[RMDB]
Chemical mapping of a 177-nucleotide RNA with 2A3 and DMS. Conditions: 150 mM KOAc, 10 mM MgCl2 and 150 mM bicine (pH 8.5), 24 C. Reactivities are given for positions 27 through 126. It was measured as part of the RMDB library RFMREP.
RNA sequence: GGGAACGACUCGAGUAGAGUCGAAAAUAUUAAUGACUAACUUAUCAGAAGUCGUAUGGGACAUGUGUUGAAUAAGUGAAAGGUAAUAAUGCCGAAAUGAUGUUAUUUCCAUAAAUUAGCAUUGUGACUGCUAUUACAUGUUCGCAUGUAAUAGCAGAAAAGAAACAACAACAACAAC
Reactivity to 2A3 in 0.01 (KOAc 150mM, MgCl2 10mM, bicine 150mM(pH8.5), 24C), signal-to-noise 2, nucleotides 027 to 126: u060a030u030u040a060a030u060g020a000c020u000a020a010c000u010u020a010u050c010a020g070a150a000g020u000c010g020u010a020u010g020g000g010a000c000a020u300g040u030g040u300u030g030a080a010u020a010a000g010u000g050a040a020a020g000g010u020a010a000u050a080a020u140g120c000c010g060a140a130a030u080g010a000u010g000u020u010a030u020u050u040c000c000a000u020a020a020a000u020u020a010g000c000a000u000u020g030u030g080a020
Reactivity to DMS in 0.01 (KOAc 150mM, MgCl2 10mM, bicine 150mM(pH8.5), 24C), signal-to-noise 3, nucleotides 027 to 126: u000a030u000u000a020a040u000g010a100c070u000a110a030c000u000u000a020u000c020a030g000a050a030g010u000c000g010u000a010u010g000g000g010a010c010a020u000g010u000g010u010u000g000a040a010u000a020a020g010u000g000a080a170a190g010g000u000a010a020u000a030a090u000g020c010c020g000a070a080a030u000g000a020u000g010u000u000a030u000u000u000c010c010a020u000a010a010a040u000u000a010g020c000a020u000u000g010u010g010a230